[RMDB]
RNA sequence: GGGAACGACUCGAGUAGAGUCGAAAACGAAGGAUAGUACAACAGACUACCUUCGCGCACCUAGUCUGUUGUACUAUGGUGCGACCGUGUACGGUGGACAUGCGAAAGCAUGUCCAUCGUACACGGAGCACGUAGUUGGGUUCGCCCAACUACGUGCAAAAGAAACAACAACAACAAC
Reactivity to 2A3 in 0.01 (KOAc 150mM, MgCl2 10mM, bicine 150mM(pH8.5), 24C), signal-to-noise 2, nucleotides 027 to 126: c040g040a050a010g080g040a080u010a020g000u020a040c030a100a000c010a110g050a010c000u040a050c000c040u090u110c040g000c030g000c010a030c000c000u000a000g000u010c030u030g010u010u020g000u030a000c000u000a000u030g020g030u060g020c050g010a030c000c000g000u000g000u000a000c000g000g000u000g000g000a000c000a000u000g000c020g050a210a050a020g000c000a000u000g000u000c000c000a000u000c000g000u000a000c000a000c000g000g000a000
Reactivity to DMS in 0.01 (KOAc 150mM, MgCl2 10mM, bicine 150mM(pH8.5), 24C), signal-to-noise 3, nucleotides 027 to 126: c080g000a090a090g000g020a070u000a030g010u000a010c050a050a050c120a050g000a040c000u000a030c060c060u010u000c040g010c030g000c040a050c070c020u000a020g000u000c010u000g010u000u000g000u000a000c000u000a000u000g000g030u020g010c030g010a230c010c020g030u000g040u000a010c010g030g010u000g010g000a000c000a020u000g070c010g020a190a120a130g040c010a020u030g010u010c010c000a010u000c010g030u000a000c020a000c040g010g010a060
An RNA of 177 nucleotides, treated with 2A3 and DMS and read out base by base. It was measured as part of the RMDB library OK1LIB. Conditions: 150 mM KOAc, 10 mM MgCl2 and 150 mM bicine (pH 8.5), 24 C. For DMS, 9,315 sequencing reads were counted.